[RMDB]
RNA sequence: GGGAACGACUCGAGUAGAGUCGAAAAAUACUUCUCAGGAUGGCGCGUUGCAGUCCAACAAAAUCCAGGGACUGUACAGAAUUUUCCUAUACCUCGAGUCGGGUUUGGAAUCUAAGGUUGACUCGCUAAAACUUUACGUGGUUCGCCACGUAAAGAACAGUUAGGUUUGGUUCGCCAAACCUAACUGAAAAGAAACAACAACAACAAC
Reactivity to 2A3 in 0.01 (KOAc 150mM, MgCl2 10mM, bicine 150mM(pH8.5), 24C), signal-to-noise 1, nucleotides 027 to 156: a000u210a030c090u120u020c020u020c010a040g070g080a100u070g110g000c050g010c030g110u090u040g010c000a000g010u000c010c000a080a060c080a060a270a040a070u060c030c020a080g000g000g010a000c030u010g000u000a050c060a060g240a230a010u050u050u000u000c010c000u070a110u050a120c010c000u010c050g010a010g010u000c020g090g000g000u030u100u030g010g000a060a000u010c030u120a080a050g030g020u070u130g070a040c010u000c030g000c030u070a110a020a020a100c000u000u000u000a000c000g000u010g000g000u030u020c150g010c130c000a000c010g010u000a000a000a000g010a000a010